[RMDB]
RNA sequence: GGGAACGACUCGAGUAGAGUCGAAAAUUCAGCGCAUUCGUGCGCUGAAAAGCUGUACAACGCAUGUACAGAAAACAAAACAAAAACAAAACAAUAAGCGUAGCAGGGUUCUUUUCGAAGAACCCAACACUAGUUUUAACUUCGGUUAAAACUAGUGAAAAGAAACAACAACAACAAC
Reactivity to 2A3 in 0.01 (KOAc 150mM, MgCl2 10mM, bicine 150mM(pH8.5), 24C), signal-to-noise 5, nucleotides 027 to 126: u020u000c010a010g000c020g000c000a000u030u060c160g120u040g000c010g010c000u000g000a000a000a000a000g010c000u000g000u010a010c000a080a020c090g010c070a120u020g000u000a000c010a000g020a050a090a010a020c040a020a080a010a010c050a030a130a030a030a010c060a030a150a020a020c030a040a140u190a260a040g020c040g110u090a030g110c140a130g030g000g000u000u000c000u020u060u030u090c160g050a010a000g000a010a000c000c000c000a000a000
Reactivity to DMS in 0.01 (KOAc 150mM, MgCl2 10mM, bicine 150mM(pH8.5), 24C), signal-to-noise 3, nucleotides 027 to 126: u000u000c000a000g000c000g030c000a030u000u000c230g020u000g030c000g020c020u010g000a000a030a080a130g020c010u000g000u010a020c010a040a100c070g000c050a150u010g010u000a010c010a010g000a050a050a060a090c150a040a080a110a060c130a020a050a060a070a080c040a060a050a050a130c100a100a100u010a050a270g000c030g010u000a070g030c300a090g000g010g000u000u000c000u000u000u000u000c150g010a010a020g010a000a000c000c000c000a020a050